[RMDB]
RNA sequence: GGGAACGACUCGAGUAGAGUCGAAAACGCUGGGUUAGCAAGCCAAGAAAUAUACAAGGGAGGGAAUACUCACUGAAGCGCGCACGGUGAGUAUUCCCAUCGAUCUUGUCUGGCGACCUAACCUGUGCUGAAGCGCGCACGGCAACCGAAAGGUGCGGACUAAGUAAGUGUUCGCACUUACUUAGUCAAAAGAAACAACAACAACAAC
Reactivity to DMS in 0.01 (KOAc 150mM, MgCl2 10mM, bicine 150mM(pH8.5), 24C), signal-to-noise 4, nucleotides 027 to 156: c090g020c020u000g010g010g040u020u000a020g030c020a050a300g010c000c000a060a140g010a130a150a170u010a120u010a110c020a040a020g010g000g010a050g040g030g010a040a020u000a010c010u000c010a020c020u000g010a040a100g000c020g030c020g010c010a300c020g020g010u000g000a040g020u000a000u000u000c000c000c000a010u000c090g000a020u010c010u000u010g000u010c120u010g020g020c000g020a260c300c000u000a010a010c000c010u020g000u000g010c010u000g000a090a050g010c000g010c020g030c000a090c040g000g010c030a120a180c020c020g010a100a120a250g020g000u000g000c030g000
Reactivity to 2A3 in 0.01 (KOAc 150mM, MgCl2 10mM, bicine 150mM(pH8.5), 24C), signal-to-noise 6, nucleotides 027 to 156: c040g000c020u060g000g000g010u010u000a000g000c050a080a020g000c010c010a110a070g130a090a290a070u300a020u060a070c020a000a000g010g010g000a020g000g000g000a010a000u000a000c000u000c000a000c000u030g030a170a060g020c000g000c000g000c000a010c020g000g010u000g000a000g010u000a000u000u000c000c000c000a000u010c000g000a000u000c000u000u010g010u000c030u020g000g000c020g010a040c010c000u000a000a000c000c010u040g070u070g020c040u110g040a080a020g000c000g010c000g000c010a000c020g100g000c030a130a190c010c010g050a100a020a030g040g000u050g010c040g040